RNA sequence: GGGAACGACUCGAGUAGAGUCGAAAACCCGCCACUGUACCUGUCUUGUAAUGCAGUGACUUGUAUAGUCCAGAGGUGGGCUGAGAGAAAAUGCCAUCCUAGGAAACAGGGUUAUUCUUCUUGUGGGGUCACGAUUUCAAUUCGUUGAAAUCGUGACAAAAGAAACAACAACAACAAC
Reactivity to DMS in 0.01 (KOAc 150mM, MgCl2 10mM, bicine 150mM(pH8.5), 24C), signal-to-noise 2, nucleotides 027 to 126: c000c000c020g000c070c020a060c030u000g000u000a020c100c070u000g020u000c020u020u040g000u000a090a090u020g000c010a080g000u010g000a040c050u010u000g020u020a080u030a060g000u000c030c030a040g010a170g020g020u000g010g000g030c000u020g030a130g000a140g010a090a050a040a030u010g010c060c030a100u010c020c000u000a170g020g000a160a150a050c030a040g000g010g000u010u020a080u010u030c100u000u000c050u010u000g010u000g010g000g030
Reactivity to 2A3 in 0.01 (KOAc 150mM, MgCl2 10mM, bicine 150mM(pH8.5), 24C), signal-to-noise 5, nucleotides 027 to 126: c000c000c000g030c010c020a030c000u020g000u030a040c030c010u000g040u040c030u090u060g090u110a130a110u190g020c020a020g070u030g070a010c010u010u000g050u040a080u130a070g030u030c000c020a030g020a040g110g110u110g070g000g010c030u060g030a060g010a000g000a050a080a040a090u120g000c010c010a020u010c000c020u030a060g060g040a080a080a030c050a040g000g000g080u010u040a070u130u040c050u090u020c020u070u070g040u060g030g040g020
Conditions: 150 mM KOAc, 10 mM MgCl2 and 150 mM bicine (pH 8.5), 24 C.
The record gives the reactivity of an RNA of 177 nucleotides to DMS and 2A3.
For 2A3 the reverse transcriptase was SuperScript II with manganese.